This 207-nucleotide RNA was probed chemically with DMS and 2A3.
The RNA was probed in 150 mM KOAc, 10 mM MgCl2 and 150 mM bicine (pH 8.5) at 24 C.
The data come from the RNA Mapping Database (RMDB), library M2RFPK.
The 2A3 profile rests on 2,282 reads.

[RMDB]
RNA sequence: GGGAACGACUCGAGUAGAGUCGAAAAAAAUCACCUCGGUAUGAUUAGGGUGAGACCUAGUAACCGUAGGGGUAUUCUCAAAGGAAGCUUUUGCAGUGACGCCCAUGUAAGUGGGAUAUAACAACAGAUCAGUUUCGCAGUUUCGACUGCGAAACAAGACUACGUCAAGAUUCGUCUUGACGUAGUCAAAAGAAACAACAACAACAAC
Reactivity to DMS in 0.01 (KOAc 150mM, MgCl2 10mM, bicine 150mM(pH8.5), 24C), signal-to-noise 1, nucleotides 027 to 156: a000a000a000u010c000a040c000c010u000c000g000g000u000a120u000g000a060u000u000a020g000g040g030u020g010a300g000a240c000c000u000a050g020u000a170a020c010c010g020u000a010g030g000g020g000u000a130u000u000c000u000c010a150a090a090g000g000a130a100g000c030u000u000u010u030g000c100a070g030u000g010a270c120g000c000c000c050a050u000g010u000a080a150g000u000g010g000g010a080u000a050u000a130a090c080a080a050c070a040g000a060u000c070a110g040u000u000u010c000g000c000a000g000u000u000u010c300g040a080c000u000g040c000g010a000a000a000c000a050a110
Reactivity to 2A3 in 0.01 (KOAc 150mM, MgCl2 10mM, bicine 150mM(pH8.5), 24C), signal-to-noise 3, nucleotides 027 to 156: a000a010a040u090c060a080c020c020u040c010g020g000u070a060u250g080a060u150u050a010g000g000g030u090g150a070g050a050c000c000u000a020g010u020a080a040c080c100g030u130a030g010g000g000g010u000a020u040u030c020u000c000a030a040a010g110g020a120a020g010c010u070u110u150u190g030c110a040g030u020g020a020c050g020c020c000c000a020u050g090u250a100a110g030u020g000g000g030a000u010a000u010a060a040c060a020a000c010a020g070a150u160c060a010g000u000u000u030c000g000c000a000g000u020u050u130c160g080a030c010u000g000c010g000a000a000a000c000a000a000